[RMDB]
RNA sequence: GGGAACGACUCGAGUAGAGUCGAAAACUUUUUUUCGUUUUUGGAUAGGUUCAGAUUUUGUGUGUCCUUUAUGUUUGUCUCUUAAACGUAAUGAAGGGGUGUUAUAUCGAAGGGUGGUUAAUUAACGCGAUAAGAUAACAUUCGUGUUAUUUUAUCGAAAAGAAACAACAACAACAAC
Reactivity to DMS in 0.01 (KOAc 150mM, MgCl2 10mM, bicine 150mM(pH8.5), 24C), signal-to-noise 9, nucleotides 027 to 126: c030u000u000u030u020u010u020u020c070g010u000u000u010u020u010g010g010a050u010a040g010g010u010u010c060a060g000a090u010u010u010u020g010u020g010u010g000u010c030c020u010u010u010a060u030g010u020u010u010g010u020c060u020c060u010u020a030a040a070c060g010u010a030a030u020g010a060a060g010g000g000g010u010g000u010u010a060u010a090u000c070g000a070a070g000g000g020u000g000g000u010u020a040a080u020u020a050a100c230g020
Reactivity to 2A3 in 0.01 (KOAc 150mM, MgCl2 10mM, bicine 150mM(pH8.5), 24C), signal-to-noise 8, nucleotides 027 to 126: c030u110u010u020u040u030u070u220c070g030u030u020u000u050u060g070g010a050u050a090g030g010u080u070c040a030g030a140u020u030u190u120g110u040g010u010g030u090c020c000u050u080u040a110u080g080u020u080u080g050u000c010u000c000u090u090a050a080a010c020g050u030a060a050u090g050a060a030g030g020g010g000u040g030u050u090a200u020a050u110c050g030a020a010g010g000g010u040g020g040u030u070a050a050u110u100a090a030c070g000
About this RNA: The data come from the RNA Mapping Database (RMDB), library OK1LIB. Structure probing data (DMS and 2A3) for a 177-nucleotide construct. For DMS, 45,639 sequencing reads were counted. For 2A3 the reverse transcriptase was SuperScript II with manganese. Conditions: 150 mM KOAc, 10 mM MgCl2 and 150 mM bicine (pH 8.5), 24 C.